[RMDB]
RNA sequence: GGGAACGACUCGAGUAGAGUCGAAAAACCUUUGUGUACAUGAGUAGCCAUAGCAAGGCUGGAGGUCCACCCAUUGGGUGGACUGACAGCUGAUGACCUAUGGCGAAAGUGUACACUCUGGUAAAUGCACUUCAGAACUUCGGUUCUGAAGUGCAAACACCAGUUCUACUUUCGAGUAGAACUGGUGAAAAGAAACAACAACAACAAC
Reactivity to 2A3 in 0.01 (KOAc 150mM, MgCl2 10mM, bicine 150mM(pH8.5), 24C), signal-to-noise 3, nucleotides 027 to 156: a000c000c000u010u020u010g000u000g000u000a000c000a010u020g000a000g010u000a000g000c010c000a010u010a010g020c040a250a200g020g010c000u010g000g000a040g000g000u000c000c010a010c020c000c120a300u260u300g030g000g020u070g000g020a000c000u000g010a000c000a000g000c000u010g010a070u040g010a020c020c010u000a000u000g010g000c000g000a000a000a000g000u000g000u000a000c000a000c000u000c000u010g000g000u010a020a050a070u070g000c000a010c000u000u000c000a000g000a000a000c000u030u180c260g110g000u000u000c000u010g000a010a000g000u010g000c010a000a000a000
Reactivity to DMS in 0.01 (KOAc 150mM, MgCl2 10mM, bicine 150mM(pH8.5), 24C), signal-to-noise 1, nucleotides 027 to 156: a090c010c000u010u000u010g000u010g060u030a000c010a060u000g060a050g020u000a300g000c000c000a010u000a010g040c040a070a230g000g000c000u000g020g010a300g000g000u000c000c000a000c000c000c000a300u000u000g110g090g070u010g030g040a000c000u000g010a300c040a010g030c020u000g000a110u000g000a120c300c010u000a000u000g010g000c000g060a050a070a290g010u000g000u000a010c020a040c010u000c010u000g000g000u000a000a090a170u000g010c020a010c000u000u000c020a020g000a010a100c000u000u010c300g020g010u000u010c000u000g000a010a000g000u030g000c000a000a000a100
This 207-nucleotide RNA was probed chemically with 2A3 and DMS. It was measured as part of the RMDB library RNAMAK. The DMS profile rests on 1,317 reads. The reactions ran in a buffer of 150 mM KOAc, 10 mM MgCl2 and 150 mM bicine (pH 8.5), at 24 C.